[RMDB]
RNA sequence: GGGAACGACUCGAGUAGAGUCGAAAAGAUGGUGAUCAAGGUCGCAUUUAUGAGAUAGAGCAAAUUUUAAGUGCGAGGUCUUAGUAUGCAAAAGUCAGAAUCAAUCAAAGAGCUUGCCACCGCUUUAAAUAAAGCGCAAGCAGAAAUGAGUGGCGCAUCAUUCUCCAAGUUUCGACUUGGAGAAUGAAAAAGAAACAACAACAACAAC
Reactivity to DMS in 0.01 (KOAc 150mM, MgCl2 10mM, bicine 150mM(pH8.5), 24C), signal-to-noise 1, nucleotides 027 to 156: g000a050u010g010g010u000g000a120u000c070a050a130g000g000u000c010g010c010a050u000u000u000a040u000g010a090g000a120u000a130g000a300g010c050a090a070a220u010u000u000u000a020a100g030u000g130c030g000a060g030g020u010c050u010u010a050g010u020a040u000g010c010a040a060a080a130g020u000c030a090g000a040a100u000c030a090a070u010c030a040a040a110g000a120g050c030u000u000g030c010c070a040c070c030g000c010u000u010u000a040a040a170u010a060a020a020g030c040g030c040a060a070g000c050a050g110a070a080a080u000g000a050g030u010g000g010c030g000c070a170
Reactivity to 2A3 in 0.01 (KOAc 150mM, MgCl2 10mM, bicine 150mM(pH8.5), 24C), signal-to-noise 3, nucleotides 027 to 156: g060a030u050g020g070u040g010a050u080c020a010a030g040g060u020c020g000c020a010u030u140u110a110u100g070a060g020a060u090a100g090a040g050c050a060a090a060u140u260u100u170a120a030g030u040g040c020g010a040g110g020u010c040u030u040a050g040u050a050u160g020c040a020a060a040a060g050u060c040a010g090a040a070u050c010a060a010u060c010a000a160a030g060a050g040c030u060u100g000c000c010a010c000c030g000c020u010u050u060a140a230a120u140a100a070a000g020c020g010c050a030a010g060c020a010g150a010a060a010u050g010a040g020u010g010g000c020g000c020a030
Source: RMDB library OK3TST, as collected in RNAgym.
Chemical mapping of a 207-nucleotide RNA with DMS and 2A3.
For DMS the reverse transcriptase was MarathonRT.